This 177-nucleotide RNA was probed chemically with DMS and 2A3.
RNA sequence: GGGAACGACUCGAGUAGAGUCGAAAAUCGCCUGUUCGCAGGCGAAAAACUGAAGCUCAGAGGGCUCUGAUUCAGAAAGAUCAUCGGAUCCGUCUGAGCUUGGCUAAAAGGGCGACUUCGGUCGCCCGUGUAGUUUUUAGUUCGCUAAAAACUACACAAAAGAAACAACAACAACAAC
Reactivity to DMS in 0.01 (KOAc 150mM, MgCl2 10mM, bicine 150mM(pH8.5), 24C), signal-to-noise 2, nucleotides 027 to 126: u000c010g010c000c000u000g000u000u010c230g030c010a000g010g000c000g000a000a040a050a120a110c020u000g000a020a010g000c000u000c010a020g010a060g000g000g000c090u000c010u000g000a010u000u000c110a160g010a080a120a120g010a070u010c200a050u000c010g010g000a030u000c000c010g020u000c010u000g020a000g010c010u010u000g000g000c090u020a060a060a110a170g030g000g000c000g020a030c000u010u010c140g040g000u010c000g010c000c000c000
Reactivity to 2A3 in 0.01 (KOAc 150mM, MgCl2 10mM, bicine 150mM(pH8.5), 24C), signal-to-noise 1, nucleotides 027 to 126: u010c010g000c030c000u030g040u020u050c210g000c040a000g000g000c000g040a040a020a000a000a000c020u040g030a000a000g000c000u000c020a020g000a000g050g000g020c000u020c000u000g040a040u130u040c030a040g240a190a120a000g030a140u180c070a010u010c000g010g000a000u000c030c020g230u000c060u000g000a000g000c010u000u000g010g000c010u070a070a050a070a120g000g020g030c020g010a000c010u040u110c200g050g000u020c000g020c000c040c010
High DMS reactivity at an A or C suggests that its Watson-Crick edge is free. 2A3 adducts were read by reverse transcription with SuperScript II with manganese. The reactions ran in a buffer of 150 mM KOAc, 10 mM MgCl2 and 150 mM bicine (pH 8.5), at 24 C. Values cover nucleotides 27 to 126. For DMS, 1,412 sequencing reads were counted.